RNA sequence: GGGAACGACUCGAGUAGAGUCGAAAAAGCCUGGUUGGCACAACUUUGCAGGGCAAGCCUAUUGGUAUGUUCUUCCCUUAUGACAUCGAACUUGUCACAGGAAAGCAAAAUAUUCUCCUGCGCAAGUAAAGACUGUCCUUCGGGACAGUCAAAAGAAACAACAACAACAAC
Reactivity to 2A3 in 0.01 (KOAc 150mM, MgCl2 10mM, bicine 150mM(pH8.5), 24C), signal-to-noise 3, nucleotides 027 to 129: a000g090c030c010u050g000g030u010u010g040g040c020a000c000a040a000c000u010u000u010g000c000a040g040g000g000c000a000a000g000c000c000u110a170u050u160g000g000u100a150u110g100u000u150c020u020u020c000c000c000u000u080a230u100g120a050c040a070u040c090g000a010a010c000u000u010g000u070c030a010c000a120g000g000a030a090a000g070c130a120a070a030a000u110a190u150u120c160u020c010c000u040g000c000g000c020a000a000g000u060a050a070a040
Reactivity to DMS in 0.01 (KOAc 150mM, MgCl2 10mM, bicine 150mM(pH8.5), 24C), signal-to-noise 4, nucleotides 027 to 129: a100g040c050c020u030g030g020u000u000g030g060c200a100c120a000a000c070u020u010u020g020c030a000g000g020g070c180a030a050g000c170c020u030a140u110u010g000g000u000a050u040g040u040u020c240u010u000c020c000c040u080u100a040u040g030a140c120a040u060c070g060a240a050c010u060u000g020u050c010a000c100a040g010g030a000a010a120g170c230a070a110a070a110u040a140u060u050c170u010c000c050u030g060c230g060c030a010a020g040u070a000a000a000